[RMDB]
RNA sequence: GGGAACGACUCGAGUAGAGUCGAAAAAGAAUAGUUUUCGAACUAUUCUCACGACGACCUUCGGAAACCCUGAGGCGCGAUCCCACGCGAUCGUCUGUUCGAACACCUGGUUGUUCGCAACCAGGAAGAGCCAAACAAGAUUCGUCUUGUUUGGCUCAAAAGAAACAACAACAACAAC
Reactivity to DMS in 0.01 (KOAc 150mM, MgCl2 10mM, bicine 150mM(pH8.5), 24C), signal-to-noise 1, nucleotides 027 to 126: a050g030a010a010u020a010g000u000u000u000u000c090g020a070a030c000u000a010u010u000c000u000c150a090c060g010a060c010g000a050c100c010u000u000c230g010g020a120a120a120c190c010c010u000g000a020g000g020c110g000c000g000a050u020c020c020c030a200c030g030c020g000a080u010c110g000u000c070u000g000u000u000c090g030a170a080c300a130c000c000u000g000g000u000u000g010u000u000c170g010c030a010a010c000c000a010g000g010a020a020
Reactivity to 2A3 in 0.01 (KOAc 150mM, MgCl2 10mM, bicine 150mM(pH8.5), 24C), signal-to-noise 1, nucleotides 027 to 126: a000g020a000a030u000a000g010u030u030u050u110c200g040a010a000c000u010a010u020u000c050u060c040a100c050g080a010c020g040a080c020c000u010u020c050g030g110a110a230a240c010c020c010u040g020a000g020g030c010g020c000g020a040u050c020c000c040a040c010g050c020g100a150u070c010g030u040c090u170g050u100u220c070g100a070a010c020a040c070c020u030g010g030u010u010g000u010u040c150g000c070a010a010c000c000a010g000g020a000a010
An RNA of 177 nucleotides, treated with DMS and 2A3 and read out base by base. The data come from the RNA Mapping Database (RMDB), library M2PK50. The DMS profile rests on 886 reads. For DMS the reverse transcriptase was MarathonRT.